RNA sequence: GGGAACGACUCGAGUAGAGUCGAAAAGCGAGUCACUCGAAUCAGAGCUCUUGGCGACCGUCGUCGGUCACGACGCUCUCGAGAAGCGUGACUGGCGUCGCGUCGUAGGCCGGAUUCUCGACGUCGAUGAGUAGGCCGUAUUCGUACGGCCUACUCAAAAAGAAACAACAACAACAAC
Reactivity to DMS in 0.01 (KOAc 150mM, MgCl2 10mM, bicine 150mM(pH8.5), 24C), signal-to-noise 1, nucleotides 027 to 126: g000c010g000a130g010u000c000a110c180u060c110g000a000a020u000c010a050g000a110g000c130u090c060u040u050g010g000c020g000a000c000c030g020u000c030g000u000c020g010g000u000c000a010c000g000a130c110g040c020u010c050u010c300g030a100g000a080a100g040c000g000u000g010a000c000u000g030g000c000g020u000c000g000c080g010u020c000g000u000a010g000g000c000c050g010g000a090u000u010c000u100c110g000a000c080g000u000c010g000a070
Reactivity to 2A3 in 0.01 (KOAc 150mM, MgCl2 10mM, bicine 150mM(pH8.5), 24C), signal-to-noise 5, nucleotides 027 to 126: g100c030g000a030g080u060c030a030c120u140c070g020a010a030u020c030a040g020a050g070c030u060c040u300u140g130g000c000g010a020c010c010g030u040c010g000u010c000g000g000u010c010a000c000g150a140c050g050c040u100c030u100c090g150a150g030a090a020g010c000g000u000g000a000c000u010g000g000c000g000u000c010g020c100g000u010c000g000u000a020g020g010c010c020g070g000a060u060u000c020u060c060g050a070c030g120u050c030g030a080
The data come from the RNA Mapping Database (RMDB), library OK1LIB. Chemical mapping of a 177-nucleotide RNA with DMS and 2A3. For DMS, 1,908 sequencing reads were counted. In probing experiments dimethyl sulfate is read out at A N1 and C N3, which are open when not base-paired.